[RMDB]
RNA sequence: GGGAACGACUCGAGUAGAGUCGAAAAGAUGACAGGUGUAUACGAGGAUGUAGCUGGGCAAGCCAGGCCUAGUGGCUCGCACACUCAUCAGUUAGAUGGUGGGUGCUGGUGCUGCUGGUGCAUCAUGCAUUCGUGAGUGUUUCGACACUCACGAAUGAAAAGAAACAACAACAACAAC
Reactivity to 2A3 in 0.01 (KOAc 150mM, MgCl2 10mM, bicine 150mM(pH8.5), 24C), signal-to-noise 2, nucleotides 027 to 126: g060a060u100g000a020c040a040g060g010u020g020u060a060u020a080c050g060a050g110g030a050u090g040u070a010g030c020u030g000g050g000c060a050a040g010c010c020a020g000g040c010c000u050a050g010u030g040g000c000u020c030g190c010a020c000a000c010u020c000a020u010c010a010g040u080u170a180g020a260u020g000g040u000g010g010g000u020g000c150u000g030g030u030g020c010u000g000c000u010g030g000u130g030c000a040u070c040a040u180g050
Reactivity to DMS in 0.01 (KOAc 150mM, MgCl2 10mM, bicine 150mM(pH8.5), 24C), signal-to-noise 3, nucleotides 027 to 126: g020a060u010g040a080c080a040g000g010u000g000u010a060u010a060c090g010a130g010g010a080u000g010u000a050g020c030u010g030g000g020c090a070a120g010c040c040a080g000g020c030c010u000a030g030u000g000g000c030u000c030g030c070a090c020a000c010u010c000a000u000c000a040g000u000u010a170g010a130u010g010g030u000g010g000g010u010g020c100u000g020g000u000g000c010u010g000c020u000g010g000u010g030c040a030u000c110a100u030g020

Overview: The record gives the reactivity of an RNA of 177 nucleotides to 2A3 and DMS. Source: RMDB library OK2TST, as collected in RNAgym. For DMS, 4,119 sequencing reads were counted. DMS adducts were read by reverse transcription with MarathonRT.